[RMDB]
RNA sequence: GGGAACGACUCGAGUAGAGUCGAAAAGAUAUGGAUGAUACGUUACCUUUCUUACGUGGAAUGCUAUUUGGAUCGGAAACGAUCCAUGUAGCGAGAGACGUGGAAAGGUAACGUAUCAUCCUAAGUCGUCUACCUACUGGUUCGCCAGUAGGUAGACAAAAGAAACAACAACAACAAC
Reactivity to DMS in 0.01 (KOAc 150mM, MgCl2 10mM, bicine 150mM(pH8.5), 24C), signal-to-noise 1, nucleotides 027 to 126: g030a030u000a300u030g050g000a000u000g010a030u000a000c000g010u000u000a030c010c000u000u010u010c000u010u020a010c000g020u000g010g030a300a260u000g000c000u000a010u000u020u010g010g000a000u010c000g000g050a210a120a260c020g010a010u000c000c010a000u000g010u000a000g000c000g000a040g010a300g000a030c000g020u000g000g030a020a000a010g000g010u000a000a000c020g000u000a010u000c000a000u000c000c000u000a000a070g000u010c050